[RMDB]
Chemical mapping of a 177-nucleotide RNA with 2A3 and DMS. The data come from the RNA Mapping Database (RMDB), library OK2TST. DMS adducts were read by reverse transcription with MarathonRT. The RNA was probed in 150 mM KOAc, 10 mM MgCl2 and 150 mM bicine (pH 8.5) at 24 C.
RNA sequence: GGGAACGACUCGAGUAGAGUCGAAAAGAUGAGGGUACCAUAUCUCGGGUCAAAGACACAGGAGAGGAGAGCUGCCUCACUUGCGAAAAUAGCUCAUAUGUCGCCACAUGUGAAGGCUGCCCUAAGGCAGGCACGUUUCGUUCGCGAAACGUGCCUGAAAAGAAACAACAACAACAAC
Reactivity to 2A3 in 0.01 (KOAc 150mM, MgCl2 10mM, bicine 150mM(pH8.5), 24C), signal-to-noise 1, nucleotides 027 to 126: g050a060u140g030a010g020g040g050u060a010c030c020a000u000a100u130c030u010c020g120g000g010u010c000a120a100a040g060a020c030a020c040a110g070g040a100g030a000g050g020a060g000a000g000c040u120g050c000c000u020c020a030c000u040u080g000c040g080a070a070a070a060u060a020g010c020u020c050a030u070a000u180g050u000c030g030c110c020a050c020a120u080g000u040g020a040a020g040g000c000u020g000c010c000c000u030a050a000g080g000
Reactivity to DMS in 0.01 (KOAc 150mM, MgCl2 10mM, bicine 150mM(pH8.5), 24C), signal-to-noise 1, nucleotides 027 to 126: g000a090u010g020a040g050g050g010u000a110c040c050a120u000a140u010c010u000c030g000g000g000u020c050a050a060a150g000a090c050a090c000a050g020g000a080g040a030g020g000a100g000a110g010c030u000g030c010c010u000c010a040c020u020u030g020c100g020a010a060a100a060u000a070g020c070u000c030a050u000a070u010g010u010c110g010c090c270a080c070a030u040g030u000g000a040a060g000g000c030u000g010c030c000c040u000a070a110g000g020